[RMDB]
RNA sequence: GGGAACGACUCGAGUAGAGUCGAAAAGGGAAACCCAGCUGCUACUAGCAGUUAUUCAUGAGUGAAUACAUAGCUCAUGUAAAGGUAACGCAGAGAACUGAAACAUCUAAGUACCUGCAGGAAGAGAAGCUGUACAAGCUUUCGAGCUUGUACAGCUAAAAGAAACAACAACAACAAC
Reactivity to DMS in 0.01 (KOAc 150mM, MgCl2 10mM, bicine 150mM(pH8.5), 24C), signal-to-noise 1, nucleotides 027 to 126: g000g000g060a060a070a150c030c000c050a100g000c000u000g000c000u000a140c150u000a040g080c000a060g000u010u000a110u010u000c000a020u010g010a010g030u000g000a170a150u010a150c230a030u000a300g000c000u000c000a000u000g000u000a020a270a080g000g000u000a150a160c150g020c120a070g000a060g000a120a100c050u000g010a120a160a160c110a040u020c000u000a090a070g000u000a170c030c000u000g020c010a050g020g000a010a100g000a190g000a140
Record summary
This 177-nucleotide RNA was probed chemically with DMS. DMS adducts were read by reverse transcription with MarathonRT.